Source: RMDB library OK2TRN, as collected in RNAgym. The record gives the reactivity of an RNA of 177 nucleotides to 2A3 and DMS. DMS adducts were read by reverse transcription with MarathonRT. For 2A3, 1,238 sequencing reads were counted. Reactivities are given for positions 27 through 126. The reactions ran in a buffer of 150 mM KOAc, 10 mM MgCl2 and 150 mM bicine (pH 8.5), at 24 C.
RNA sequence: GGGAACGACUCGAGUAGAGUCGAAAACGACGGUGACACACUGAAGGAAUGUCCGCUUGAGCACAGAGCAUGGAAUAGUUUUCUUGUGGAGGAUCACGGGUUUGGAGUCUUCCACACCAGUGUCUGGAAAACAAGCCGUAUUCGUACGGCUUGUUUUAAAAGAAACAACAACAACAAC
Reactivity to 2A3 in 0.01 (KOAc 150mM, MgCl2 10mM, bicine 150mM(pH8.5), 24C), signal-to-noise 2, nucleotides 027 to 126: c060g120a000c060g060g010u050g080a000c000a020c000a000c080u070g050a050a040g080g080a110a040u080g020u020c040c020g000c050u030u040g060a020g070c080a050c050a130g060a020g030c000a070u150g040g030a060a080u070a260g120u030u020u100u060c030u030u040g000u000g000g010a010g040g000a020u040c030a020c130g230g110g000u120u120u140g060g040a020g020u000c080u060u000c000c000a010c000a000c000c000a040g020u010g000u090c040u040g070g060
Reactivity to DMS in 0.01 (KOAc 150mM, MgCl2 10mM, bicine 150mM(pH8.5), 24C), signal-to-noise 3, nucleotides 027 to 126: c090g020a140c130g020g010u010g000a070c090a080c060a100c100u000g030a130a150g010g010a070a070u010g000u000c020c040g000c060u000u000g000a100g020c100a040c120a100g000a070g010c060a060u010g020g020a060a070u000a080g010u010u000u000u000c040u010u000g020u010g020g010a060g000g010a030u000c140a110c080g010g000g030u010u010u010g010g000a140g010u000c060u000u000c000c010a030c030a080c120c040a040g010u010g020u020c030u010g010g000